[RMDB]
RNA sequence: GGGAACGACUCGAGUAGAGUCGAAAAGAUAUGGAUGCACUACCCACCGUCGAAGAUCGAAGAACUCGGAAACGAGGGAGAUCUAAGACGAGGUGCAUCCUAAGUCAAAUCCCGCUUCGGCGGGAAACUUAGUUAGUUCGUUCGCGAACUAACUAAGAAAAGAAACAACAACAACAAC
Reactivity to 2A3 in 0.01 (KOAc 150mM, MgCl2 10mM, bicine 150mM(pH8.5), 24C), signal-to-noise 2, nucleotides 027 to 126: g130a060u210a180u300g000g000a000u010g020c000a020c000u190a270c000c010c010a010c020c010g000u020c000g000a050a010g000a010u020c010g140a300a030g000a100a070c000u000c010g000g040a100a050a040c000g000a010g000g020g000a020g010a000u010c000u010a030a000g010a000c010g000a010g000g000u000g000c000a000u020c000c000u000a020a010g020u020c030a030a030a190u010c000c020c020g000c020u060u090c180g140g000c010g000g000g090a020a000a000
Reactivity to DMS in 0.01 (KOAc 150mM, MgCl2 10mM, bicine 150mM(pH8.5), 24C), signal-to-noise 3, nucleotides 027 to 126: g000a140u000a160u020g000g000a010u000g010c010a010c000u000a070c000c000c010a300c100c000g000u000c010g000a300a030g000a010u000c000g020a120a130g010a150a170c000u000c010g010g010a130a060a110c000g000a010g020g010g000a060g020a010u000c000u010a040a300g010a010c000g000a050g030g000u010g000c000a000u000c010c000u000a000a100g020u020c080a100a110a100u000c000c000c000g000c020u020u020c110g020g000c010g000g000g000a010a000a030